Chemical mapping of a 207-nucleotide RNA with 2A3. For 2A3 the reverse transcriptase was SuperScript II with manganese. High 2A3 reactivity points to a flexible backbone, as in loops and unpaired stretches. The data come from the RNA Mapping Database (RMDB), library RNAMAK.
RNA sequence: GGGAACGACUCGAGUAGAGUCGAAAAGAUAUGGAGGGUUCUCUAGCGUGGGCGAAGAACACACUAGUAGCUGGUACUCGGAAACGAGUACCCGAAAGUGUGGGAGCCUCGGGACCCUCCUAAGUCAAACAAUUUAGACGUUCGCGUCUAAAUUGAACCCAUUAUGCAGUUUCGACUGCAUAAUGGGAAAAGAAACAACAACAACAAC
Reactivity to 2A3 in 0.01 (KOAc 150mM, MgCl2 10mM, bicine 150mM(pH8.5), 24C), signal-to-noise 1, nucleotides 027 to 156: g010a010u030a020u080g000g000a000g050g010g030u270u020c080u050c150u210a110g130c130g200u300g120g000g000c040g080a250a010g010a030a010c000a000c000a000c000u030a030g120u030a030g060c040u050g000g030u000a000c000u010c010g010g010a000a030a020c010g000a000g000u000a000c000c000c000g000a030a010a000g000u000g000u000g000g010g000a000g000c000c010u000c010g010g000g000a000c010c000c000u000c000c000u000a000a000g010u000c010a030a030a090c000a000a000u020u000u000a000g000a000c010g000u050u030c300g020c000g150u000c000u000a000a000a000u000u010g020a010a010